[RMDB]
RNA sequence: GGGAACGACUCGAGUAGAGUCGAAAACGACCAUGCGUGGACAGUAAAACGAAGUACAUGCGAAUGUAGUAGCCGUUUACUAUGAGACUAGGCAUUAUAAUUGAAUAUCAUAGUAUAAAUUGCCAUGAGUGCGUUCUAAAUUCGUUUAGAACGCACUAAAAGAAACAACAACAACAAC
Reactivity to DMS in 0.01 (KOAc 150mM, MgCl2 10mM, bicine 150mM(pH8.5), 24C), signal-to-noise 4, nucleotides 027 to 126: c120g010a150c070c060a080u040g010c020g030u010g000g020a140c040a100g000u020a060a070a050a120c060g020a120a080g000u000a010c020a010u000g010c230g000a110a040u000g000u010a060g010u030a100g030c100c020g000u010u000u000a020c010u000a010u010g010a020g000a100c090u010a160g010g010c070a070u010u040a120u010a120a140u020u000g000a070a130u000a040u000c010a000u000a010g000u000a030u020a030a040a060u000u010g000c020c010a030u000g010
Reactivity to 2A3 in 0.01 (KOAc 150mM, MgCl2 10mM, bicine 150mM(pH8.5), 24C), signal-to-noise 5, nucleotides 027 to 126: c060g060a010c000c020a040u110g000c000g030u020g020g000a050c020a040g050u150a030a090a040a050c080g040a150a030g070u010a000c010a020u030g030c010g050a100a040u060g030u070a050g060u090a040g030c020c000g000u000u000u000a000c000u000a010u010g010a000g000a040c050u100a100g050g010c060a040u060u100a090u150a210a130u090u100g080a040a010u060a010u110c010a020u010a010g000u020a010u030a050a110a040u080u110g040c050c030a060u100g070